[RMDB]
RNA sequence: GGGAACGACUCGAGUAGAGUCGAAAAUUUUCUGUCGCAGCAAAAGUCAUAAAAGGUGCUAAUAUGAUUUUAAUCGAUUUUCAAUAAAGCUCAAGCCUGGACGCGCGAACUAGGCAAAUCGAACAAACACCUACCGAAUAUUCGUAUUCGGUAGGUGAAAAGAAACAACAACAACAAC
Reactivity to DMS in 0.01 (KOAc 150mM, MgCl2 10mM, bicine 150mM(pH8.5), 24C), signal-to-noise 1, nucleotides 027 to 126: u010u000u000u000c020u020g000u010c090g020c040a040g000c040a140a020a040a070g000u000c050a000u000a000a050a110a070g020g010u000g020c040u000a060a210u000a030u000g000a090u010u010u000u000a010a220u000c020g010a010u000u000u010u000c030a060a040u000a060a010a160g000c050u000c030a180a060g010c010c000u010g020g000a030c090g030c090g010c050g000a050a180c060u000a000g010g020c020a020a010a010u010c030g000a040a140c230a100a070a120
Reactivity to 2A3 in 0.01 (KOAc 150mM, MgCl2 10mM, bicine 150mM(pH8.5), 24C), signal-to-noise 1, nucleotides 027 to 126: u020u000u040u010c020u000g040u090c030g030c060a040g000c030a140a000a090a040g040u020c030a000u030a050a080a060a020g080g070u050g000c040u030a100a100u030a140u070g030a010u000u030u030u060a110a070u060c010g010a000u080u010u050u060c020a080a080u100a140a090a000g000c000u000c160a050a000g020c000c030u060g000g040a020c010g030c000g000c000g280a090a050c010u000a000g000g000c020a000a010a030u040c010g010a040a000c040a010a060a010